[RMDB]
RNA sequence: GGGAACGACUCGAGUAGAGUCGAAAAGGGGGCGAAAGGACUCGACGGAGGUAGUGAGGGCUAAGCUGCAUGCCGUGGUUCCUGCCACCACGUAAAACAGGUAGGGAAAACACAACUGCCAACAACGAAUUGGCACUCGCUGCUUAAUUAAAAGCAGGGUAUAAUUCGGGUUCGCCCGAAUUAUACCAAAAGAAACAACAACAACAAC
Reactivity to 2A3 in 0.01 (KOAc 150mM, MgCl2 10mM, bicine 150mM(pH8.5), 24C), signal-to-noise 2, nucleotides 027 to 156: g040g010g000g010g000c010g050a090a020a060g030g030a030c010u020c040g040a050c050g020g010a020g000g020u050a040g040u050g040a070g020g080g000c020u040a020a070g010c000u030g030c020a060u160g050c060c000g000u000g010g000u110u110c000c000u000g010c000c000a100c030c010a000c010g160u230a000a020a020a030c020a000g000g000u020a000g010g000g000a010a060a050a000c110a020c030a150a140c090u060g000c010c000a000a020c050a000a090c040g050a130a110u010u000g000g000c000a020c020u050c030g090c010u030g020c000u050u020a150a120u130u140a110a300a040a000g000c000a010g030